[RMDB]
RNA sequence: GGGAACGACUCGAGUAGAGUCGAAAACUAAAAAGAGGUGGCUAGGAAAAUGCCAAGGUCUGGGUUGGUAGGAUGCCAUUCCUCUAAAGAAUGAAUACAGUAGGUGUCCAGACGAAAUGUGAUGACUCCAACUUGCCACACAUUGAAUUUCAGGUGAGUAGUAAUCAUACUUCGGUAUGAUUACUACAAAAGAAACAACAACAACAAC
Reactivity to 2A3 in 0.01 (KOAc 150mM, MgCl2 10mM, bicine 150mM(pH8.5), 24C), signal-to-noise 5, nucleotides 027 to 156: c030u080a090a020a030a030a020g070a060g020g040u020g000g010c030u050a040g080g170a110a110a090a120u130g000c010c000a020a010g030g010u010c010u020g020g040g020u020u010g030g000u060a060g040g080a030u120g040c010c000a020u080u050c010c010u040c020u020a050a040a030g060a000a050u160g040a070a040u170a100c040a050g120u120a040g060g060u060g020u010c010c000a010g000a020c020g020a070a070a030u110g010u050g030a190u040g020a050c020u020c040c010a060a080c060u050u070g000c010c000a010c000a000c000a030u040u110g070a120a090u060u100u170c060a040g130g000u070g060a030
Reactivity to DMS in 0.01 (KOAc 150mM, MgCl2 10mM, bicine 150mM(pH8.5), 24C), signal-to-noise 2, nucleotides 027 to 156: c050u040a040a080a110a100a070g010a110g010g040u000g010g000c040u010a210g020g000a060a090a120a150u000g000c010c020a060a050g020g010u000c040u000g000g010g000u010u000g020g050u000a060g030g010a150u000g000c020c030a100u000u000c020c010u000c070u000a090a070a110g020a100a110u000g000a090a080u000a070c040a100g020u000a080g000g000u000g010u000c000c010a050g000a060c050g020a090a050a060u000g020u000g030a150u000g000a030c000u020c070c120a090a090c020u000u000g000c000c000a050c020a030c020a020u020u010g010a110a110u000u010u000c050a070g010g010u010g020a160
Chemical mapping of a 207-nucleotide RNA with 2A3 and DMS.
The reactions ran in a buffer of 150 mM KOAc, 10 mM MgCl2 and 150 mM bicine (pH 8.5), at 24 C.
It was measured as part of the RMDB library OK3TST.